[RMDB]
RNA sequence: GGGAACGACUCGAGUAGAGUCGAAAACGCAGCGAUCGCGGAUCACGAGAAGAUGUUCUGACCACGCGAGGCGAGUACUUACUCUUCUCCUGCGACAGGGAAUGCCUGCUGAGUCUAGAUUCGGAAACGUACUCCCCUGACGGCGACAUCUUCAUCGGUAACGACGACUAUUCGUAGUCGUCGUUACAAAAGAAACAACAACAACAAC
Reactivity to 2A3 in 0.01 (KOAc 150mM, MgCl2 10mM, bicine 150mM(pH8.5), 24C), signal-to-noise 2, nucleotides 027 to 156: c010g050c060a060g070c020g150a100u170c130g030c060g030g080a070u130c110a060c140g040a000g010a030a010g040a050u010g070u150u080c140u180g190a300c010c000a070c120g140c070g020a010g000g020c010g000a000g000u000a100c040u070u000a060c020u040c010u120u070c020u020c040c010u150g030c080g080a100c000a020g020g000g050a150a250u220g110c000c000u080g040c010u060g030a000g020u030c040u070a050g010a110u170u150c070g080g000a030a020a030c020g000u010a020c010u040c040c070c000c000u020g030a040c060g020g000c010g000a010c000a000u030c000u030u010c000a090u060c000g010
Chemical mapping of a 207-nucleotide RNA with 2A3. The 2A3 profile rests on 982 reads. Source: RMDB library OK3TST, as collected in RNAgym. 2A3 adducts were read by reverse transcription with SuperScript II with manganese. Reactivities are given for positions 27 through 156. The RNA was probed in 150 mM KOAc, 10 mM MgCl2 and 150 mM bicine (pH 8.5) at 24 C.